[RMDB]
RNA sequence: GGGAACGACUCGAGUAGAGUCGAAAAAGGAACUCAGCAGUGGCCAAGGGCUUCCCACUCAGCCCUCCCUUAGUGCCCAUCCCUGGGCACAGCCUGACAGGCAGGAGUAGGGCCCAGUGUCCGCUCGCCCAGGCUUGACCACCUUCUCUUCUCAGGCCAUAUUCCUAAGAUUCGUCUUAGGAAUAUGAAAAGAAACAACAACAACAAC
Reactivity to 2A3 in 0.01 (KOAc 150mM, MgCl2 10mM, bicine 150mM(pH8.5), 24C), signal-to-noise 6, nucleotides 027 to 156: a000g080g000a080a010c050u040c090a030g030c030a030g070u070g080g040c080c070a090a090g030g000g010c030u070u050c040c010c020a030c040u110c040a030g010c010c010c000u010c010c000c000u060u140a030g000u010g010c010c010c010a110u150c070c030c070u060g000g000g000c000a000c000a010g010c000c000u070g060a090c070a160g020g000c030a030g050g100a040g020u180a210g020g000g000c000c030c020a120g010u140g020u100c020c030g010c020u030c010g010c000c000c000a010g030g000c010u070u130g040a060c020c010a030c030c020u090u050c040u040c010u110u030c050u010c040a050g080g000c030
Reactivity to DMS in 0.01 (KOAc 150mM, MgCl2 10mM, bicine 150mM(pH8.5), 24C), signal-to-noise 2, nucleotides 027 to 156: a100g010g000a070a030c030u000c050a090g040c090a110g020u000g010g020c020c030a090a090g030g010g020c030u000u010c030c000c050a110c070u000c090a110g000c000c010c020u000c020c000c020u010u010a090g010u000g020c000c000c010a080u010c090c090c100u000g010g000g030c010a030c040a050g020c000c010u000g010a180c090a100g020g020c030a030g020g020a100g030u000a050g050g010g050c000c020c050a080g030u020g020u000c000c020g000c020u000c020g010c010c000c000a090g010g020c020u000u000g020a080c000c020a040c030c040u000u000c040u000c020u010u000c020u000c040a120g000g020c090